[RMDB]
RNA sequence: GGGAACGACUCGAGUAGAGUCGAAAACGUGCUCUCUUCGGAGAGCACGAAAGAAAGGACAAAGCACCAAAUAAAGGAGGUGCAGGGUGCAACCACCAAUAAAAAGAAGUAGGUUCGCCUACUUCAACUUUAAUGUGUUGUUCGCAACACAUUAAAGAAAAGAAACAACAACAACAAC
Reactivity to DMS in 0.01 (KOAc 150mM, MgCl2 10mM, bicine 150mM(pH8.5), 24C), signal-to-noise 4, nucleotides 027 to 126: c020g020u000g010c010u000c000u000c000u010u000c210g010g000a020g020a010g020c000a000c010g000a020a060a110g010a070a100a090g010g010a080c110a070a120a130g020c000a020c010c010a060a130a140u010a070a080a140g030g010a250g010g020u010g000c010a060g020g030g020u000g010c060a080a150c070c040a090c070c030a070a090u040a040a070a040a120a090g000a020a000g010u000a000g000g010u000u000c240g010c000c000u000a010c000u000u000c000a070a100

Structure probing data (DMS) for a 177-nucleotide construct. For DMS, 3,585 sequencing reads were counted. Values cover nucleotides 27 to 126. Conditions: 150 mM KOAc, 10 mM MgCl2 and 150 mM bicine (pH 8.5), 24 C. The data come from the RNA Mapping Database (RMDB), library M2PK50.